[RMDB]
RNA sequence: GGGAACGACUCGAGUAGAGUCGAAAACAUCAAUUAAAAUUGAUAACUUAACUGCUAACACAGACUACCCACAAGGUACAUAUAAAGUAUCUUUCUCUAAUGAAUCAGGAGAAUCAGAAAAAGUAGAUGUUCCUGCGUUUAAGACUAAGGACAUUAAGAUCAAACGAGUGUUCGCACUCGUUUGAUCAAAAGAAACAACAACAACAAC
Reactivity to 2A3 in 0.01 (KOAc 150mM, MgCl2 10mM, bicine 150mM(pH8.5), 24C), signal-to-noise 2, nucleotides 027 to 156: c000a020u040c000a020a030u070u230a200a250a050a050u010u000g000a040u040a150a010c020u150u090a080a100c020u030g000c060u200a160a000c030a030c000a040g140a170c050u140a110c000c030c000a070c040a040a020g000g010u010a000c010a020u240a000u080a260a080a030g000u000a030u000c000u000u050u000c010u000c020u030a040a190u240g090a130a060u100c030a030g040g000a000g010a040a040u080c040a050g190a060a090a040a030a000g140u100a020g030a010u030g060u100u070c010c010u020g000c010g050u060u070u130a040a020g000a000c010u020a020a060g040g000a000c000a000u060u080a060a000